[RMDB]
RNA sequence: GGGAACGACUCGAGUAGAGUCGAAAAAGACUUGUGAAUUAGUUAAUAUGAGACCAUUGUUGAUGUCCUGGUUUUGAUCAUUUUACUGCAGUUAUGUAAGAUGUUAACAUUUGAAGAAGCUAGACUAAUGGUAUAUGGGAUAUCUUUACACAGGUUACCCCUCAGUAUUAUUCGUAAUACUGAGGGGAAAAGAAACAACAACAACAAC
Reactivity to 2A3 in 0.01 (KOAc 150mM, MgCl2 10mM, bicine 150mM(pH8.5), 24C), signal-to-noise 6, nucleotides 027 to 156: a000g030a010c000u020u010g010u020g060a100a130u110u060a080g060u040u110a080a040u110a110u190g120a070g050a040c010c020a030u030u070g070u050u100g060a100u100g030u040c070c070u040g070g040u030u030u040u100g070a060u080c010a010u000u020u020u020a020c010u020g100c060a190g050u190u170a160u150g000u040a020a010g000a010u010g000u050u060a080a040c040a130u100u160u290g080a100a060g030a030a000g020c020u030a000g010a030c010u090a050a030u030g040g020u030a110u010a030u150g060g020g020a040u050a030u140c000u020u060u060a030c020a000c000a010g050g000u030u050a060
Reactivity to DMS in 0.01 (KOAc 150mM, MgCl2 10mM, bicine 150mM(pH8.5), 24C), signal-to-noise 3, nucleotides 027 to 156: a120g010a050c020u000u000g030u010g010a100a130u010u000a060g010u010u000a070a090u010a100u010g000a150g020a100c020c020a100u000u000g020u000u010g010a160u010g020u000c040c050u020g020g020u000u000u000u000g020a090u010c020a010u000u010u000u010a030c020u010g010c020a240g010u010u010a120u000g010u000a050a030g020a030u000g010u010u010a060a120c090a170u000u000u000g010a120a130g000a060a080g030c020u000a110g020a040c020u000a050a050u000g020g030u000a040u000a100u010g020g010g010a100u000a040u000c030u000u000u000a130c020a040c030a030g020g010u000u000a280